[RMDB]
RNA sequence: GGGAACGACUCGAGUAGAGUCGAAAAGCAAGCGGCGGAUGCGCAUUGCACAAAGGACCGUGUACUUGCCCGCUCACAUUGGGCGGUUCCGUUGCUGCAAACUUGUUCUGGUAAAAAACUUUGGGAAGAUUCCAAAAAUGUUCGCAUUUUUGGAAUCAAAAGAAACAACAACAACAAC
Reactivity to DMS in 0.01 (KOAc 150mM, MgCl2 10mM, bicine 150mM(pH8.5), 24C), signal-to-noise 1, nucleotides 027 to 126: g020c020a060a050g040c050g020g030c020g020g010a010u010g030c140g020c000a050u010u000g010c010a010c020a060a130a220g020g000a060c230c210g000u000g000u000a020c140u000u000g000c010c010c040g010c010u010c000a090c220a240u010u010g000g000g000c000g000g000u000u000c010c020g000u010u000g020c000u000g000c030a030a060a070c170u020u020g000u000u010c050u020g000g020u000a030a100a160a080a040a060c070u000u010u000g010g000g010a110a090
Reactivity to 2A3 in 0.01 (KOAc 150mM, MgCl2 10mM, bicine 150mM(pH8.5), 24C), signal-to-noise 1, nucleotides 027 to 126: g030c080a120a080g000c010g040g000c000g010g000a040u070g070c010g000c020a030u000u030g020c020a010c020a000a130a000g300g060a040c200c170g020u010g010u000a040c110u010u030g030c000c020c000g000c030u000c000a140c030a260u150u250g000g020g000c000g000g010u000u040c000c000g010u000u040g050c000u010g020c010a050a030a080c060u090u110g030u000u000c030u060g010g160u160a130a120a040a040a120a200c100u140u070u130g100g010g010a140a050